An RNA of 177 nucleotides, treated with 2A3 and DMS and read out base by base. For DMS the reverse transcriptase was MarathonRT.
RNA sequence: GGGAACGACUCGAGUAGAGUCGAAAACGAGCCUCUGCCGUUGUAAAUGGCGCUGUGACCCAUUAGUACACGCAAAUGAUGUACAGAUUGAAGAGGUUCCGGCGCGGUUAACAAAUCCGGAAGCGUGUCAAGGUUCGCGCUUCGGUGCGAGCCUUGAAAAAGAAACAACAACAACAAC
Reactivity to 2A3 in 0.01 (KOAc 150mM, MgCl2 10mM, bicine 150mM(pH8.5), 24C), signal-to-noise 4, nucleotides 027 to 126: c020g000a010g050c010c010u010c010u030g020c010c020g020u010u010g030u030a030a050a020u040g070g000c000g000c010u020g020u060g020a010c000c020c000a010u020u080a020g010u000a000c010a010c010g080c050a040a050a110u200g050a080u010g000u020a000c000a020g090a060u090u150g030a070a020g090a070g010g000u050u010c020c000g020g000c000g000c000g040g000u000u020a020a010c030a010a040a020u030c020c000g000g010a020a000g020c000g020u050g010
Reactivity to DMS in 0.01 (KOAc 150mM, MgCl2 10mM, bicine 150mM(pH8.5), 24C), signal-to-noise 8, nucleotides 027 to 126: c090g000a110g010c010c010u000c020u000g000c050c070g000u000u000g000u010a070a040a040u000g000g020c010g010c000u010g000u010g000a040c010c020c010a150u020u020a120g010u000a010c010a010c040g020c250a100a100a110u030g010a140u000g010u010a010c010a150g010a140u030u030g000a090a100g000a160g020g000u000u010c070c020g000g010c040g010c030g000g020u000u000a030a040c070a040a100a060u010c290c010g010g010a030a050g010c070g010u020g000

Values cover nucleotides 27 to 126. For 2A3 the reverse transcriptase was SuperScript II with manganese. The reactions ran in a buffer of 150 mM KOAc, 10 mM MgCl2 and 150 mM bicine (pH 8.5), at 24 C.